[RMDB]
RNA sequence: GGGAACGACUCGAGUAGAGUCGAAAAUGCCGACGGCUGUUGAAGGCUCGUUGUCGCUUGAUGAGCUUCUCAGUGACCAUUUCGUCCGCGAUCUCCACGCGCGUAUGUUUGGUCCGGUAUAGGACUGCAAUUGAUAAGGCUUCGGCCUUAUCAAUUGAAAAGAAACAACAACAACAAC
Reactivity to DMS in 0.01 (KOAc 150mM, MgCl2 10mM, bicine 150mM(pH8.5), 24C), signal-to-noise 6, nucleotides 027 to 126: u000g010c010c010g020a110c300g000g000c010u010g000u000u000g010a090a060g010g000c010u000c010g020u000u000g020u010c180g020c250u000u000g010a030u010g000a030g000c020u000u010c010u000c010a030g010u000g010a030c020c020a040u000u000u000c030g010u000c010c010g010c010g010a050u010c070u000c100c110a060c110g010c020g000c040g010u000a010u000g010u000u000u000g010g010u000c000c000g000g000u000a040u000a110g010g000a130c040u000g000
Reactivity to 2A3 in 0.01 (KOAc 150mM, MgCl2 10mM, bicine 150mM(pH8.5), 24C), signal-to-noise 4, nucleotides 027 to 126: u050g000c030c010g040a110c090g090g050c010u030g020u160u070g050a080a010g120g020c010u010c020g010u010u040g110u060c090g030c300u090u170g010a020u030g010a020g010c000u010u000c010u000c010a050g010u030g030a030c000c010a030u030u110u130c020g020u020c030c010g020c020g010a070u040c030u080c160c060a050c080g020c010g000c010g000u030a010u070g050u010u040u050g000g000u000c020c000g000g020u080a080u110a110g100g080a030c030u060g010
Source information:
The data come from the RNA Mapping Database (RMDB), library OK2TST. The record gives the reactivity of an RNA of 177 nucleotides to DMS and 2A3. The RNA was probed in 150 mM KOAc, 10 mM MgCl2 and 150 mM bicine (pH 8.5) at 24 C. 2A3 adducts were read by reverse transcription with SuperScript II with manganese.